[RMDB]
RNA sequence: GGGAACGACUCGAGUAGAGUCGAAAAAGUGACUUUCCAGGUGUCACACAGUGAGUGGCAUAAUCAGAGUACAAUUUGAGUCAUGCCCAUACAUCACAUUGCCAGUGAUUACCCAAGGAAAGUGACGCCUACCGUGAAUGUUCGCAUUCACGGUAGGAAAAGAAACAACAACAACAAC
Reactivity to 2A3 in 0.01 (KOAc 150mM, MgCl2 10mM, bicine 150mM(pH8.5), 24C), signal-to-noise 6, nucleotides 027 to 126: a010g040u030g040a000c000u000u000u010c000c000a020g000g010u000g010u010c010a000c000a000c010a010g010u010g020a020g010u120g030g000c010a000u030a020a040u050c000a000g010a020g050u120a130c080a230a250u030u040u050g020a040g090u160c060a010u010g000c000c000c020a070u120a060c050a130u060c010a000c010a040u030u150g110c110c060a030g000u000g000a010u050u280a050c000c010c050a100a070g000g010a010a000a010g010u010g020a000c010g000
Reactivity to DMS in 0.01 (KOAc 150mM, MgCl2 10mM, bicine 150mM(pH8.5), 24C), signal-to-noise 3, nucleotides 027 to 126: a110g020u000g000a030c000u000u010u000c020c000a050g000g030u000g000u020c000a000c000a180c050a080g000u000g000a050g020u000g020g020c020a010u000a160a090u000c010a000g020a010g000u000a180c300a110a150u000u000u000g000a020g010u040c170a040u000g000c010c030c140a150u030a110c200a290u000c050a050c000a060u000u030g000c290c130a150g030u000g010a020u000u020a030c010c020c070a090a140g040g000a020a040a000g000u000g000a010c030g010